RNA sequence: GGGAACGACUCGAGUAGAGUCGAAAAGAAGUUCGCCGUUGCAUCCAUGAAUGUAUCCGUGAAUAUCGACAGGAUUUUGGCCGUGGCAGCUCGGCUGAUCGAAAGUCAGCAUUAUGCGGCCCAGCACGCCAUUAUCCGUCUUCGGACGGAUAAUGGCAAAAGAAACAACAACAACAAC
Reactivity to DMS in 0.01 (KOAc 150mM, MgCl2 10mM, bicine 150mM(pH8.5), 24C), signal-to-noise 2, nucleotides 027 to 126: g000a150a300g000u000u010c070g020c020c010g000u000u000g010c070a030u000c040c030a130u000g000a110a030u010g010u000a080u010c020c010g010u000g010a070a070u000a070u020c080g040a100c090a050g030g010a140u000u010u000u000g040g000c020c070g000u030g020g020c060a070g000c030u000c300g010g030c000u030g000a000u000c030g040a140a160a300g000u000c000a040g020c030a080u030u020a050u000g010c000g020g000c010c010c070a060g000c080a070c230
Reactivity to 2A3 in 0.01 (KOAc 150mM, MgCl2 10mM, bicine 150mM(pH8.5), 24C), signal-to-noise 1, nucleotides 027 to 126: g020a030a000g000u020u020c040g060c030c010g000u050u050g030c000a020u080c090c020a140u130g050a080a040u100g120u060a010u050c070c030g020u090g060a080a070u140a040u120c010g050a020c000a040g010g050a090u000u030u060u220g030g060c000c000g030u070g050g050c040a040g040c010u000c090g050g030c020u010g120a060u150c170g090a090a020a000g000u030c000a000g000c000a020u080u070a070u300g040c000g000g070c000c000c000a060g080c000a010c110
The data come from the RNA Mapping Database (RMDB), library OK2TRN.
Chemical mapping of a 177-nucleotide RNA with DMS and 2A3.
The RNA was probed in 150 mM KOAc, 10 mM MgCl2 and 150 mM bicine (pH 8.5) at 24 C.
The 2A3 profile rests on 839 reads.
For DMS the reverse transcriptase was MarathonRT.